[RMDB]
RNA sequence: GGGAACGACUCGAGUAGAGUCGAAAAGCGCGUGAGGGUGGUGACGAUUAUUUCUCGUCGAAAUAAAAGAGGGCGUAGGCGUAGUCGGGUUGCUUACCGUGGUUCUAAUGAGGUACGCUCUGUGCGGCGAGGCUAAAAGUUUCGACUUUUAGCCUCGAAAAGAAACAACAACAACAAC
Reactivity to DMS in 0.01 (KOAc 150mM, MgCl2 10mM, bicine 150mM(pH8.5), 24C), signal-to-noise 2, nucleotides 027 to 126: g020c040g000c080g020u000g020a080g010g020g020u000g020g010u000g000a100c040g010a180u010u000a050u000u000u000c080u010c160g000u000c090g000a030a050a050u000a020a060a080a110g000a070g000g000g000c040g030u000a020g010g000c030g010u000a080g000u010c030g010g000g010u000u000g010c060u000u000a070c070c030g030u000g000g000u010u010c050u010a050a100u010g010a090g010g010u010a040c070g000c000u000c050u010g000u000g010c020g020g030